[RMDB]
RNA sequence: GGGAACGACUCGAGUAGAGUCGAAAAAUGAACGCGAAGCAUACCGCCUCGCAGAGCUGGCACAAGCAUACCUGAACGCUCUCCAAGGGCAGCAUUACGGAUUCACCAUCUACCGCACCGCCCCUAUUGGCGGCAUCGUAUGGCUACCCGAUGCAGAACUUGUAUUCGAUUUCGAUCGAAUACAAGUAAAAGAAACAACAACAACAAC
Reactivity to DMS in 0.01 (KOAc 150mM, MgCl2 10mM, bicine 150mM(pH8.5), 24C), signal-to-noise 2, nucleotides 027 to 156: a100u010g010a060a200c080g000c000g010a060a090g020c030a190u000a050c100c090g010c000c030u010c010g000c040a100g030a110g000c090u000g000g120c040a110c080a140a190g030c020a140u000a110c020c030u000g030a090a130c060g060c010u000c000u000c040c020a060a100g010g020g050c050a100g010c050a070u010u000a100c060g030g030a130u000u000c070a100c060c050a070u000c080u000a030c000c000g050c300a040c030c010g000c000c010c120c080u010a190u000u000g010g020c000g060g000c020a030u000c040g010u000a070u000g000g010c050u000a080c020c010c000g010a130u000g000c060a130g010a120
Reactivity to 2A3 in 0.01 (KOAc 150mM, MgCl2 10mM, bicine 150mM(pH8.5), 24C), signal-to-noise 4, nucleotides 027 to 156: a030u130g030a090a040c090g010c010g030a010a030g000c030a050u100a220c030c090g000c020c010u030c020g000c030a010g000a020g020c050u060g030g030c050a060c040a130a030g050c030a040u090a140c000c020u030g070a090a020c040g000c030u020c040u010c050c080a080a080g010g020g000c030a020g000c010a050u040u150a060c060g040g030a050u050u120c030a010c050c000a010u010c030u100a120c030c060g030c060a050c010c030g040c000c010c020c040u150a130u070u200g010g010c010g000g010c010a040u040c000g050u020a040u100g030g010c020u050a070c010c000c010g020a010u050g000c030a010g030a120

Conditions: 150 mM KOAc, 10 mM MgCl2 and 150 mM bicine (pH 8.5), 24 C. An RNA of 207 nucleotides, treated with DMS and 2A3 and read out base by base. For 2A3, 2,537 sequencing reads were counted. It was measured as part of the RMDB library OK3TST. Reactivities are rounded to 0.1 and cut off at 0 and 3.